Source: RMDB library OK2TRN, as collected in RNAgym. The record gives the reactivity of an RNA of 177 nucleotides to 2A3 and DMS. For DMS, 2,091 sequencing reads were counted. Values cover nucleotides 27 to 126.

[RMDB]
RNA sequence: GGGAACGACUCGAGUAGAGUCGAAAAUUGGCAUUGCUCACUGCGGAUAUGCGGGACCGCCAGGUUAUCGACGCCGCGUUCGCCGACCACGCGGUCUCGGCGAUCCCGCAGGUCGAAACCGAUUCCGCAUGUCUUUGCGGUUCGCCGCAAAGACAUGAAAAGAAACAACAACAACAAC
Reactivity to 2A3 in 0.01 (KOAc 150mM, MgCl2 10mM, bicine 150mM(pH8.5), 24C), signal-to-noise 2, nucleotides 027 to 126: u120u080g030g000c060a060u070u140g020c060u020c030a140c050u030g000c010g010g010a020u040a060u230g000c000g000g000g020a040c040c010g000c080c110a120g000g060u050u090a160u140c060g000a040c050g080c160c050g070c060g070u120u070c060g000c020c000g000a010c020c030a040c090g020c100g020g070u000c000u010c020g040g010c000g030a010u040c070c020c030g000c030a020g010g020u040c030g030a060a010a020c020c000g010a070u080u060c010c000g000
Reactivity to DMS in 0.01 (KOAc 150mM, MgCl2 10mM, bicine 150mM(pH8.5), 24C), signal-to-noise 2, nucleotides 027 to 126: u000u010g000g000c050a170u000u010g000c090u000c080a180c090u000g010c000g000g000a040u010a050u000g010c000g010g000g010a020c000c040g010c040c080a180g000g030u000u000a080u000c140g000a030c140g020c050c080g010c070g000u010u020c070g010c020c010g000a040c030c090a120c150g020c030g000g000u010c060u000c070g010g030c010g010a030u000c060c050c020g020c000a010g000g010u000c050g000a040a140a120c050c000g000a090u000u000c010c030g000